Conditions: 150 mM KOAc, 10 mM MgCl2 and 150 mM bicine (pH 8.5), 24 C. This 177-nucleotide RNA was probed chemically with 2A3 and DMS. The 2A3 profile rests on 2,052 reads. Values cover nucleotides 27 to 126. The DMS profile rests on 1,839 reads.
[RMDB]
RNA sequence: GGGAACGACUCGAGUAGAGUCGAAAAAAGGAAUCAUCAGUGCCACUCAACUUCCAGAACGCAUGGCAAACGCGGGAAGACGAAUUGCCGAGAUUGAAGCACCAAGACCAGCUCGUGAAGAUGCUCCACCGAUCUCACUAUUCGUAGUGAGAUCGGUAAAAGAAACAACAACAACAAC
Reactivity to 2A3 in 0.01 (KOAc 150mM, MgCl2 10mM, bicine 150mM(pH8.5), 24C), signal-to-noise 2, nucleotides 027 to 126: a000a000g120g010a070a020u040c010a040u020c020a060g050u020g070c030c000a030c010u050c020a010a060c010u050u070c000c010a030g060a210a040c060g010c060a030u090g100g010c000a110a010a050c070g020c040g060g030g010a050a010g060a020c060g050a090a060u080u040g000c020c030g040a040g010a030u050u110g010a080a000g030c020a020c010c020a030a020g010a050c000c010a030g000c000u020c020g090u030g040a060a010g070a050u050g010c040u000c010c000
Reactivity to DMS in 0.01 (KOAc 150mM, MgCl2 10mM, bicine 150mM(pH8.5), 24C), signal-to-noise 3, nucleotides 027 to 126: a090a020g000g000a090a040u000c020a050u020c060a070g030u000g000c040c030a110c090u010c060a060a110c070u000u000c040c010a100g000a140a110c060g010c030a110u000g000g030c060a030a030a130c110g030c010g020g000g020a060a060g010a160c100g020a020a060u000u000g010c010c010g000a110g010a080u000u000g010a070a090g000c030a060c060c040a060a070g010a060c060c030a100g000c010u000c040g000u000g010a060a170g010a080u010g020c060u000c060c060